This 207-nucleotide RNA was probed chemically with DMS and 2A3. The data come from the RNA Mapping Database (RMDB), library OK3TST. For DMS, 1,420 sequencing reads were counted. 2A3 adducts were read by reverse transcription with SuperScript II with manganese. DMS adducts were read by reverse transcription with MarathonRT.
[RMDB]
RNA sequence: GGGAACGACUCGAGUAGAGUCGAAAAGUGUGAAGUGAGUGAGCCUCUUACGAGCACGAAUUACAAGGCUCUAUUGACAUUACUGGGCGCCAGGAGCCCUACCUGGACAAGUCUCGAAGAUCGGGCCGCGAUUGAGAGACGACUAUUAUCGGCCACAGAUAUUAGCCCAGUUCGCUGGGCUAAUAUCAAAAGAAACAACAACAACAAC
Reactivity to DMS in 0.01 (KOAc 150mM, MgCl2 10mM, bicine 150mM(pH8.5), 24C), signal-to-noise 1, nucleotides 027 to 156: g000u020g060u010g020a130a200g020u000g030a100g060u010g000a090g060c020c000u000c060u000u000a080c090g000a270g000c040a080c040g020a100a160u020u000a130c130a160a020g040g040c020u000c030u010a100u000u000g010a110c030a080u020u000a080c060u000g000g000g000c090g000c010c020a030g010g000a080g020c110c020c030u020a020c010c050u030g020g050a160c030a090a200g030u000c000u000c020g000a090a200g010a080u000c020g020g000g060c130c030g110c030g000a190u010u000g000a300g000a100g050a000c050g020a050c080u010a080u000u000a170u000c100g050g020c000c040a090c110a170
Reactivity to 2A3 in 0.01 (KOAc 150mM, MgCl2 10mM, bicine 150mM(pH8.5), 24C), signal-to-noise 2, nucleotides 027 to 156: g040u040g000u000g070a000a040g030u000g050a000g000u040g000a000g030c000c010u130c020u090u020a030c050g000a010g010c010a010c150g030a020a030u270u130a140c040a050a020g000g000c000u000c010u050a120u010u190g050a010c040a070u020u150a110c110u090g070g010g050c070g000c000c000a010g000g020a050g020c020c010c000u020a030c000c000u020g000g020a060c030a100a010g010u010c000u010c010g040a060a050g000a040u040c030g000g080g090c090c050g100c010g020a020u100u110g000a020g000a000g000a050c030g000a000c020u050a010u250u070a110u070c020g000g000c020c030a030c020a080